[RMDB]
RNA sequence: GGGAACGACUCGAGUAGAGUCGAAAAGAGCAACUUCGGUUUAGCCUCAACACGAAUAUGUUGUGCAAUUUGAGCUUCUACAUUCACAAUGGGCGUUGUACCCUUUGGAAGAUAACUCGGCGGAUUAAACUACCCUGUGAUUCGUCACAGGGUAGUUAAAAGAAACAACAACAACAAC
Reactivity to 2A3 in 0.01 (KOAc 150mM, MgCl2 10mM, bicine 150mM(pH8.5), 24C), signal-to-noise 1, nucleotides 027 to 126: g070a000g050c010a030a030c000u050u080c070g060g000u050u070u130a010g030c010c020u060c040a050a050c090a050c090g180a100a010u300a070u120g050u080u050g010u010g080c050a040a110u040u040u060g070a050g010c000u130u030c010u010a090c030a140u010u110c040a050c000a180a040u000g020g060g000c030g100u070u050g020u270a240c010c010c040u040u040u020g050g010a030a000g020a070u040a090a020c020u000c040g040g050c000g040g000a060u140u290a070
Reactivity to DMS in 0.01 (KOAc 150mM, MgCl2 10mM, bicine 150mM(pH8.5), 24C), signal-to-noise 2, nucleotides 027 to 126: g010a150g020c060a090a030c040u000u020c060g000g010u000u010u000a080g010c040c050u000c030a040a030c090a070c040g000a040a050u020a090u000g030u000u000g000u010g010c090a060a090u000u000u000g000a070g020c080u000u010c040u000a070c140a110u000u010c060a110c050a010a020u000g000g000g040c030g010u010u010g000u020a130c010c000c010u010u000u010g010g010a030a050g010a040u010a060a110c050u000c030g010g000c060g000g010a110u000u010a060

This 177-nucleotide RNA was probed chemically with 2A3 and DMS.
The DMS profile rests on 2,277 reads.
Reactivities are given for positions 27 through 126.
For DMS the reverse transcriptase was MarathonRT.
The data come from the RNA Mapping Database (RMDB), library OK2TST.